The record gives the reactivity of an RNA of 207 nucleotides to DMS and 2A3.
The DMS profile rests on 4,258 reads.
The reactions ran in a buffer of 150 mM KOAc, 10 mM MgCl2 and 150 mM bicine (pH 8.5), at 24 C.
For DMS the reverse transcriptase was MarathonRT.
RNA sequence: GGGAACGACUCGAGUAGAGUCGAAAAUACGGAAACGUCAUCGUGAUCACCAUUAACUACCGUCUGGGAAUACUAGGUAAGUGAUUUCAUCAUGUGAAUGACUGAGCAAGAGGAAACAUGAAAAGUCCACUUCUCGUUUUGACGGGGCUCGUGGAUAGGAUUAUUUACCUUUCGAGGUAAAUAAUCCAAAAGAAACAACAACAACAAC
Reactivity to DMS in 0.01 (KOAc 150mM, MgCl2 10mM, bicine 150mM(pH8.5), 24C), signal-to-noise 3, nucleotides 027 to 156: u000a160c060g000g010a130a080a100c090g010u000c030a060u000c030g030u000g010a060u000c040a090c030c040a070u010u000a060a080c040u000a030c000c030g010u000c090u030g010g020g010a100a100u010a120c080u010a050g010g130u010a040a120g020u000g020a080u010u000u020c000a080u000c030a040u000g020u020g020a100a070u010g000a120c040u000g010a140g020c080a080a040g020a100g000g000a210a110a030c050a110u000g000a050a090a030a130g010u000c020c010a030c010u030u010c000u000c020g010u000u010u030u030g010a050c050g020g000g010g030c300u000c090g040u000g010g010a040u000a130
Reactivity to 2A3 in 0.01 (KOAc 150mM, MgCl2 10mM, bicine 150mM(pH8.5), 24C), signal-to-noise 6, nucleotides 027 to 156: u190a030c040g020g050a040a100a040c050g050u050c030a070u070c040g040u020g030a040u060c040a020c120c020a050u020u060a040a020c010u030a050c010c020g100u080c090u120g020g050g040a100a070u160a190c050u040a070g030g020u050a050a030g020u030g060a060u020u070u100c020a030u010c000a010u030g040u000g100a140a060u060g040a030c050u040g010a010g050c040a070a060g030a030g110g080a060a080a050c050a030u120g080a090a100a040a030g040u010c010c000a010c000u080u000c000u010c010g010u010u090u100u210g080a010c010g000g000g000g010c080u080c180g000u000g000g000a010u050a070